[RMDB]
RNA sequence: GGGAACGACUCGAGUAGAGUCGAAAAACCCUUGCCCGAUGUUCGCUGAUUCGUCAGCCGCAUGCCCAGGUGGCCGCGAUCUUCAAGGCUACGGCGCGGAUAGGUCCGCGCUGAUCGUUUUCCUCCAACCGCAUAACCGGCUUCGGCCGGUUAUGAACGUGUAAACAUCCUUCGGGAUGUUUACACGAAAAGAAACAACAACAACAAC
Reactivity to 2A3 in 0.01 (KOAc 150mM, MgCl2 10mM, bicine 150mM(pH8.5), 24C), signal-to-noise 1, nucleotides 027 to 156: a000c040c020c000u050u110g100c050c010c020g010a060u050g030u060u130c070g000c000u000g040a070u070u080c180g020u020c120a030g020c020c030g020c020a050u140g040c020c010c000a020g010g010u000g010g000c030c000g110c070g000a000u000c000u040u010c010a040a000g000g010c000u000a000c010g000g000c000g020c010g020g010a030u100a220g130g060u000c000c020g010c010g000c010u000g000a000u010c030g040u040u050u070u140c020c010u080c010c020a040a100c080c010g070c040a000u000a000a000c000c000g010g000c010u030u070c090g080g000c020c000g000g020u000u000a000u000g000a000a000
An RNA of 207 nucleotides, treated with 2A3 and read out base by base.
The RNA was probed in 150 mM KOAc, 10 mM MgCl2 and 150 mM bicine (pH 8.5) at 24 C.
2A3 adducts were read by reverse transcription with SuperScript II with manganese.
Reactivities are given for positions 27 through 156.
Source: RMDB library M2RFPK, as collected in RNAgym.